[RMDB]
RNA sequence: GGGAACGACUCGAGUAGAGUCGAAAAGUCGGUAUAAGGCACUCUCUAUCAGAAUGGAUGUCUUGCUGCUACAAUAGAUAGAGUAGGUUGUAGUAGACUAUAGAUUAAUUAGUUGAAAUGUAGUGAUGGUAAUGUAUAGUGCUGGAGUAAGUGAAAGCGUCCAUUAUGAAUUCGUUCAUAAUGGACGAAAAGAAACAACAACAACAAC
Reactivity to DMS in 0.01 (KOAc 150mM, MgCl2 10mM, bicine 150mM(pH8.5), 24C), signal-to-noise 3, nucleotides 027 to 156: g000u000c040g020g010u010a110u010a110a080g010g020c050a060c030u000c030u010c030u000a120u000c040a110g010a150a120u000g010g040a070u000g020u000c040u010u010g000c040u000g020c020u010a060c030a050a060u000a070g000a120u010a100g010a170g010u010a100g020g030u000u000g010u000a050g010u000a130g000a080c040u010a080u010a080g020a160u000u010a060a120u010u000a080g020u000u010g000a070a090a140u000g010u000a060g010u010g020a090u000g010g020u000a050a050u000g020u010a080u000a090g020u000g020c020u020g000g010a120g010u000a050a130g010u020g000a080a110a200g000
Reactivity to 2A3 in 0.01 (KOAc 150mM, MgCl2 10mM, bicine 150mM(pH8.5), 24C), signal-to-noise 7, nucleotides 027 to 156: g040u040c050g010g020u110a090u020a130a060g040g000c010a030c040u020c010u000c020u020a040u100c040a090g120a240a080u120g030g060a040u050g020u020c020u030u060g030c010u000g000c000u010a020c020a020a030u030a050g160a090u070a030g090a030g070u110a050g030g100u010u010g000u000a010g010u010a000g000a020c020u050a050u080a140g030a030u080u110a150a060u100u060a090g040u030u060g060a080a110a090u110g020u080a070g020u020g060a040u040g020g030u050a090a030u080g030u050a050u040a100g040u030g030c040u020g000g030a030g020u070a120a030g030u050g100a090a030a030g040

Annotation:
Source: RMDB library OK3TST, as collected in RNAgym. An RNA of 207 nucleotides, treated with DMS and 2A3 and read out base by base. For 2A3 the reverse transcriptase was SuperScript II with manganese. Conditions: 150 mM KOAc, 10 mM MgCl2 and 150 mM bicine (pH 8.5), 24 C. Reactivities are given for positions 27 through 156. As a SHAPE reagent, 2A3 marks flexible, mostly unpaired nucleotides at the ribose 2'-OH.